An RNA of 207 nucleotides, treated with DMS and 2A3 and read out base by base. 2A3 adducts were read by reverse transcription with SuperScript II with manganese. The 2A3 profile rests on 9,226 reads.

[RMDB]
RNA sequence: GGGAACGACUCGAGUAGAGUCGAAAAGGUACAGCGUCCGUACAAUCCGAAUGCUCGCCGCAUGUCGGAGAUGAUUCAGGCUGACUGGGCGAAAGUUGGCGUACAGGCCAAAAUUGUCACCUUUGAGUGGGGUGAAUACCUGAAAAGGGUGAAAGGCAAUUAGAGGUACAUUCGUGUACCUCUAAUUAAAAGAAACAACAACAACAAC
Reactivity to DMS in 0.01 (KOAc 150mM, MgCl2 10mM, bicine 150mM(pH8.5), 24C), signal-to-noise 5, nucleotides 027 to 156: g020g020u000a070c030a090g010c030g030u000c010c010g000u000a100c050a090a160u000c030c020g010a070a010u000g010c050u000c140g010c110c140g030c030a090u000g020u000c020g020g010a060g010a080u010g010a140u000u000c040a090g020g010c060u000g010a090c040u010g020g030g000c020g010a060a070a130g020u000u010g000g010c050g020u000a100c100a080g020g000c010c010a060a030a070a110u000u010g000u000c000a020c010c010u000u000u000g020a170g020u000g000g010g010g020u010g010a100a110u010a030c010c000u000g000a080a070a080a070g000g010g010u000g010a040a070a110g020g020c110
Reactivity to 2A3 in 0.01 (KOAc 150mM, MgCl2 10mM, bicine 150mM(pH8.5), 24C), signal-to-noise 7, nucleotides 027 to 156: g060g000u070a060c020a030g010c030g060u030c040c020g000u040a040c040a050a090u020c010c010g020a020a000u030g010c030u070c130g130c090c060g040c020a030u100g210u160c010g040g010a020g010a070u160g020a030u050u120c060a030g060g000c020u040g040a100c030u040g010g020g000c030g020a080a030a060g080u050u040g000g000c020g020u090a070c090a090g120g000c010c030a020a040a030a030u140u130g030u020c010a010c020c000u020u020u030g090a100g040u120g020g010g000g000u040g030a060a050u110a130c010c010u010g020a030a040a050a040g050g000g000u020g020a040a050a040g040g010c020
The RNA was probed in 150 mM KOAc, 10 mM MgCl2 and 150 mM bicine (pH 8.5) at 24 C.